[RMDB]
RNA sequence: GGGAACGACUCGAGUAGAGUCGAAAAACACACCGGGGGAGAUGCGCCACUCCGGAGUUGGGGGCUGAUCCACCGCGGUUGCCGAUCUAAGCCGCCUCUGAGCGCCCACGUGGGCUAGACGACGAGAGGCUCCGGACGCGUUCGCGCGUUUGGAGCCAAAAGAAACAACAACAACAAC
Reactivity to DMS in 0.01 (KOAc 150mM, MgCl2 10mM, bicine 150mM(pH8.5), 24C), signal-to-noise 4, nucleotides 027 to 126: a090c100a120c160a120c060c010g000g010g000g000g000a070g000a100u010g000c040g020c050c030a070c050u000c040c040g000g020a050g040u010u000g000g000g000g000g000c010u020g010a100u020c020c050a070c040c040g010c020g000g010u010u000g000c040c040g010a090u020c070u010a160a090g000c040c010g020c040c010u000c040u020g020a120g020c090g000c030c020c020a140c220g000u020g000g000g000c020u000a020g010a080c050g030a110c100g010a050g000a200
Reactivity to 2A3 in 0.01 (KOAc 150mM, MgCl2 10mM, bicine 150mM(pH8.5), 24C), signal-to-noise 6, nucleotides 027 to 126: a000c070a000c000a020c020c010g010g010g000g020g020a110g020a060u110g040c030g040c040c000a120c040u060c020c000g040g010a060g030u120u130g040g010g020g010g000c020u040g040a070u010c010c020a040c050c040g040c010g020g010u030u080g030c010c030g020a030u020c010u090a070a000g010c000c010g030c050c010u040c040u050g050a040g020c030g030c010c020c000a090c060g060u200g020g000g010c010u010a040g030a050c050g010a010c040g010a020g010a040
This 177-nucleotide RNA was probed chemically with DMS and 2A3. The data come from the RNA Mapping Database (RMDB), library OK1LIB. Conditions: 150 mM KOAc, 10 mM MgCl2 and 150 mM bicine (pH 8.5), 24 C.